[RMDB]
RNA sequence: GGGAACGACUCGAGUAGAGUCGAAAACAGUUACUGAGUGUCUUUGAUAGCCAGGCAUUGUGCCGGGGGCAGGAGAUAUGAUGGUGAGAAGAUAUGGCCCUUAUCACUUGGCUCUGUGCCUAGGUUAGUGUUCACAGAGAGAUUCUGGGCUUGUGGACCCUACGAAAAUGUUCGCAUUUUCGUAGGGAAAAGAAACAACAACAACAAC
Reactivity to DMS in 0.01 (KOAc 150mM, MgCl2 10mM, bicine 150mM(pH8.5), 24C), signal-to-noise 2, nucleotides 027 to 156: c070a090g000u000u010a060c050u020g020a200g020u000g040u000c000u000u010u000g010a120u010a130g020c010c010a140g000g040c020a300u020u010g030u010g040c030c030g000g030g010g040g040c070a170g000g020a070g010a090u000a070u000g010a130u010g040g050u020g010a100g020a100a070g010a090u000a090u000g000g020c000c000c020u000u000a070u010c050a040c070u000u040g010g040c010u000c040u030g020u000g000c110c020u000a060g020g020u000u000a050g000u010g020u000u000c040a030c010a020g000a060g020a160g010a140u010u000c070u000g010g020g060c000u020u000g030u000g000g000a240
Reactivity to 2A3 in 0.01 (KOAc 150mM, MgCl2 10mM, bicine 150mM(pH8.5), 24C), signal-to-noise 2, nucleotides 027 to 156: c040a010g040u050u090a020c010u040g050a020g040u040g030u060c040u050u170u060g100a130u050a040g060c050c010a030g040g000c050a060u070u150g050u160g030c040c020g210g010g030g030g000c020a020g000g030a050g040a010u030a020u150g060a050u070g000g050u030g040a100g020a100a000g030a030u050a040u140g040g010c000c000c000u000u080a070u020c010a040c140u070u010g060g000c000u020c040u050g030u080g000c000c030u060a060g130g000u030u090a030g010u050g030u170u160c010a010c010a030g020a000g010a010g020a050u060u040c020u100g000g000g060c000u000u040g030u020g000g020a020